The record gives the reactivity of an RNA of 207 nucleotides to 2A3 and DMS.
RNA sequence: GGGAACGACUCGAGUAGAGUCGAAAACCAUUCCUUAUACAUUGAGUAUUGCUGAAUUCAGUUUAGCGUGCAUGCUCUUGGCUAUUCUCAUAGUGAUUGUCAAAUUUGGAGUUACUUAUUCGUCAAUAAAACACUACCACGUUCGCGUGGUAGUGAACCCUGUCAUAUACUUCGGUAUAUGACAGGGAAAAGAAACAACAACAACAAC
Reactivity to 2A3 in 0.01 (KOAc 150mM, MgCl2 10mM, bicine 150mM(pH8.5), 24C), signal-to-noise 6, nucleotides 027 to 156: c010c000a020u010u050c000c000u100u060a050u070a170c060a140u110u150g020a010g030u040a060u150u150g010c010u010g040a120a110u120u140c070a100g140u060u080u120a070g020c070g010u050g040c010a030u050g000c000u000c000u010u020g010g000c010u040a050u070u060c080u030c060a090u100a100g120u090g100a070u050u050g040u060c040a040a070a080u090u060u080g030g000a040g050u100u050a080c050u160u110a100u250u140c070g090u050c060a080a140u080a130a090a010a020c000a010c000u000a000c000c000a000c000g010u040u030c050g000c000g080u000g000g000u010a000g000u000g000a000a000
Reactivity to DMS in 0.01 (KOAc 150mM, MgCl2 10mM, bicine 150mM(pH8.5), 24C), signal-to-noise 2, nucleotides 027 to 156: c050c040a210u000u000c000c010u000u010a190u000a070c070a200u020u000g010a140g020u000a050u000u030g030c000u000g010a100a100u000u010c110a170g000u000u010u000a040g050c040g060u010g020c050a150u000g000c000u000c040u000u000g020g000c080u020a110u000u000c050u000c050a080u010a100g000u000g020a060u010u020g020u010c030a010a080a150u010u020u010g000g020a150g010u000u000a080c060u000u000a140u000u000c060g000u010c020a060a110u000a050a100a090a110c010a020c000u000a020c010c000a030c010g010u000u000c300g010c040g040u000g000g000u000a000g010u000g000a010a060

Notes: The 2A3 profile rests on 3,845 reads. Conditions: 150 mM KOAc, 10 mM MgCl2 and 150 mM bicine (pH 8.5), 24 C.